[RMDB]
RNA sequence: GGGAACGACUCGAGUAGAGUCGAAAAGAUAUGGAUCUAGGGAGAAGGCCAUCGGAAACGAUGGUCAUCUUCGAAGAACUAGAGUCCUAAGUCAAAACCUAUGCUUACCUUCGGGUAAGCAUAGGAAGCAAAGUAAUCUCUUCGGAGAUUACUUUGCAAAAGAAACAACAACAACAAC
Reactivity to 2A3 in 0.01 (KOAc 150mM, MgCl2 10mM, bicine 150mM(pH8.5), 24C), signal-to-noise 1, nucleotides 027 to 126: g020a040u120a020u100g000g000a000u040c000u010a030g160g000g000a040g010a060a020g000g000c020c000a000u000c000g000g000a060a020a020c000g000a000u000g000g060u000c000a000u010c020u010u010c030g100a120a080g060a060a080c000u000a000g010a020g300u090c000c000u030a110a060g050u030c030a060a070a040a120c000c010u000a010u000g010c000u010u010a010c010c000u040u090c300g130g000g010u000a000a010g010c000a000u000a000g000g000a000a010
Reactivity to DMS in 0.01 (KOAc 150mM, MgCl2 10mM, bicine 150mM(pH8.5), 24C), signal-to-noise 2, nucleotides 027 to 126: g000a020u010a300u000g000g000a300u000c000u000a030g020g000g000a030g000a010a020g030g000c000c010a030u000c000g000g000a110a080a200c020g010a010u000g000g010u010c020a040u000c020u000u000c030g010a110a070g010a100a300c020u000a010g000a050g000u020c000c020u000a050a200g010u000c050a060a040a120a230c010c000u000a000u000g010c000u010u000a000c000c000u000u020c180g000g010g000u000a000a010g000c000a000u000a000g000g000a030a100
Structure probing data (2A3 and DMS) for a 177-nucleotide construct. The 2A3 profile rests on 3,096 reads. Conditions: 150 mM KOAc, 10 mM MgCl2 and 150 mM bicine (pH 8.5), 24 C. 2A3 adducts were read by reverse transcription with SuperScript II with manganese. Values cover nucleotides 27 to 126.